The record gives the reactivity of an RNA of 207 nucleotides to DMS and 2A3.
The DMS profile rests on 4,116 reads.
High DMS reactivity at an A or C suggests that its Watson-Crick edge is free.
[RMDB]
RNA sequence: GGGAACGACUCGAGUAGAGUCGAAAAACUGCAACUACGGAUGCAGAACUACGUUCAUCCAAUUUAUUUGGACGCAUGAAAUGAGAAUAGGGAACGGGAUUCUCAUACGCAGGCUACGGCCUGCGAAAAAACUCCUUAUGCUUCGGCAUAAGGAGAACUUAUCAUAACUCUUCGGAGUUAUGAUAAGAAAAGAAACAACAACAACAAC
Reactivity to DMS in 0.01 (KOAc 150mM, MgCl2 10mM, bicine 150mM(pH8.5), 24C), signal-to-noise 2, nucleotides 027 to 156: a080c000u000g000c010a040a050c030u000a150c150g030g020a200u010g000c010a010g000a130a120c030u000a000c030g010u000u000c030a080u000c140c070a130a200u000u000u000a120u010u000u000g000g010a010c000g000c030a040u030g030a110a130a160u000g010a060g010a080a050u000a110g020g010g000a080a060c030g000g000g000a300u000u000c020u010c000a060u000a110c010g000c000a010g030g010c010u010a090c220g050g010c000c000u000g060c000g000a000a020a070a030a010a020c000u000c010c010u000u000a010u010g000c000u000u010c300g070g000c000a000u000a010a000g010g010a000g000a000a010
Reactivity to 2A3 in 0.01 (KOAc 150mM, MgCl2 10mM, bicine 150mM(pH8.5), 24C), signal-to-noise 5, nucleotides 027 to 156: a000c000u010g000c000a030a000c030u150a050c140g130g040a040u020g000c010a000g030a100a050c080u120a030c030g000u000u010c010a010u010c010c010a010a010u120u240u180a170u180u050u010g000g010a000c010g010c030a030u160g090a160a160a020u010g000a020g000a000a000u020a030g050g020g000a010a000c010g000g000g010a000u010u010c010u000c000a000u010a040c010g000c000a010g000g000c000u020a070c280g070g000c010c000u010g000c000g010a000a000a000a000a000a010c000u000c000c000u000u000a000u000g000c010u020u080c190g100g000c000a000u000a000a010g000g000a000g000a000a000